[RMDB]
RNA sequence: GGGAACGACUCGAGUAGAGUCGAAAAGACUGUCAGAGUCUGAGACAGAGACACAGUCUCACAGUCACUCUCUCUCUGUCUGAGUGACACUCACUGACACUCUCUGUGUCAGAGACUCUCAGUGAGUAUGUAUAGCAGAUUUCGAUCUGCUAUACAUAAAAGAAACAACAACAACAAC
Reactivity to 2A3 in 0.01 (KOAc 150mM, MgCl2 10mM, bicine 150mM(pH8.5), 24C), signal-to-noise 9, nucleotides 027 to 126: g030a000c010u030g020u180c060a020g010a010g140u000c010u020g000a020g040a020c010a020g040a000g010a020c010a010c010a300g040u000c010u030c050a090c040a030g010u010c000a010c010u010c000u000c000u000c010u020c070u110g150u200c090u050g050a010g010u020g000a000c010a050c050u060c020a040c040u030g030a020c000a010c030u030c000u000c020u040g040u020g150u130c010a000g010a010g020a030c000u000c000u000c020a000g000u010g010a030g070u060
Reactivity to DMS in 0.01 (KOAc 150mM, MgCl2 10mM, bicine 150mM(pH8.5), 24C), signal-to-noise 9, nucleotides 027 to 126: g000a040c000u000g000u010c190a080g010a050g010u000c010u000g000a060g010a020c020a030g000a030g010a120c150a130c210a150g000u000c030u000c070a110c270a110g010u000c010a020c020u000c010u000c040u000c070u010c120u010g000u000c030u000g000a050g010u000g000a030c040a100c080u000c070a050c030u000g000a030c100a100c220u000c020u000c010u000g010u000g010u010c040a020g000a030g000a050c050u000c200u000c010a010g010u000g000a070g010u000
This 177-nucleotide RNA was probed chemically with 2A3 and DMS.
2A3 adducts were read by reverse transcription with SuperScript II with manganese.
It was measured as part of the RMDB library OK2TRN.
DMS adducts were read by reverse transcription with MarathonRT.
The DMS profile rests on 27,366 reads.